[RMDB]
RNA sequence: GGGAACGACUCGAGUAGAGUCGAAAAGAUAUGGAGUGCAUAACGGACAUGCAGACAGCUCGGAAACGAGCUGCUGCAACAGCCGUCAUGCACUCCUAAGUCAAAGUUAGGGGUUCGCCCCUAACAAGAUCUGGUUACAGUUCGCUGUAACCAGAUCAAAAGAAACAACAACAACAAC
Reactivity to 2A3 in 0.01 (KOAc 150mM, MgCl2 10mM, bicine 150mM(pH8.5), 24C), signal-to-noise 2, nucleotides 027 to 126: g040a000u110a040u190g000g010a010g000u030g010c000a000u010a050a010c030g000g000a040c050a150u120g020c020a020g300a300c000a010g160c000u010c010g030g040a080a100a060c000g000a000g040c020u000g000c010u010g000c010a010a010c030a010g100c000c020g000u000c010a000u010g000c000a000c000u040c010c000u000a000a000g000u010c030a000a060a050g000u020u000a000g000g010g040g010u000u070c300g200c010c000c000c000u000a010a010c000a000a030
Reactivity to DMS in 0.01 (KOAc 150mM, MgCl2 10mM, bicine 150mM(pH8.5), 24C), signal-to-noise 3, nucleotides 027 to 126: g000a030u000a300u010g000g000a020g040u000g000c010a000u000a050a000c000g010g020a050c090a210u010g000c000a020g000a130c000a020g010c000u010c000g000g000a160a070a260c010g000a010g030c000u010g000c000u000g000c010a000a030c300a180g000c010c010g020u010c040a010u000g010c000a010c000u010c000c020u010a010a110g010u000c040a110a160a150g000u000u000a000g020g010g020g020u000u000c300g000c000c000c000c010u000a000a020c010a090a090